[RMDB]
RNA sequence: GGGAACGACUCGAGUAGAGUCGAAAAUUGGAAUUUCGCUGGGAUCUGAGUCGAGGUGAAGGGAGCUGAAGCGCGCACGGCUUUGAUCUUCACUACCCACCGAUGUAAGAUCCUGUGCUGAAGCGCGCACGGCAACCGAAAGGUGCGGCACGGGUAACGAAUAUUGUGAGUUCGCUCACAAUAUUCGAAAAGAAACAACAACAACAAC
Reactivity to 2A3 in 0.01 (KOAc 150mM, MgCl2 10mM, bicine 150mM(pH8.5), 24C), signal-to-noise 3, nucleotides 027 to 156: u110u080g100g030a050a070u080u100u170c060g010c040u060g010g000g030a020u000c020u040g020a050g060u020c010g030a030g010g010u010g000a020a000g020g020g040a010g000c000u030g020a190a010g010c000g000c000g000c010a010c000g020g020c000u280u170u110g030a030u040c000u010u000c000a000c000u060a090c000c070c040a070c050c020g040a030u040g040u160a010a010g000a000u000c000c000u000g010u010g000c010u050g040a140a060g000c010g000c000g000c000a000c010g020g020c010a040a030c010c000g050a080a050a000g050g000u020g000c010g020g010c040a030c110g060g000g030u100a100a030
Reactivity to DMS in 0.01 (KOAc 150mM, MgCl2 10mM, bicine 150mM(pH8.5), 24C), signal-to-noise 2, nucleotides 027 to 156: u010u000g000g010a130a170u000u000u000c050g040c050u000g020g000g020a100u010c030u010g010a300g000u000c030g000a240g020g020u010g020a080a030g000g040g020a110g040c000u020g000a040a070g050c010g080c020g000c000a300c050g020g020c010u000u020u010g000a030u010c010u000u010c010a040c040u000a050c040c010c020a300c060c010g020a090u000g000u000a170a040g010a010u000c010c020u020g010u000g010c000u040g000a220a070g020c040g030c010g040c030a180c080g030g000c050a140a050c010c010g000a060a120a190g020g030u000g010c070g040g000c080a100c040g000g000g010u000a110a290
Notes:
An RNA of 207 nucleotides, treated with 2A3 and DMS and read out base by base. 2A3 adducts were read by reverse transcription with SuperScript II with manganese. The 2A3 profile rests on 3,832 reads. The data come from the RNA Mapping Database (RMDB), library RNAMAK. Conditions: 150 mM KOAc, 10 mM MgCl2 and 150 mM bicine (pH 8.5), 24 C. For DMS the reverse transcriptase was MarathonRT.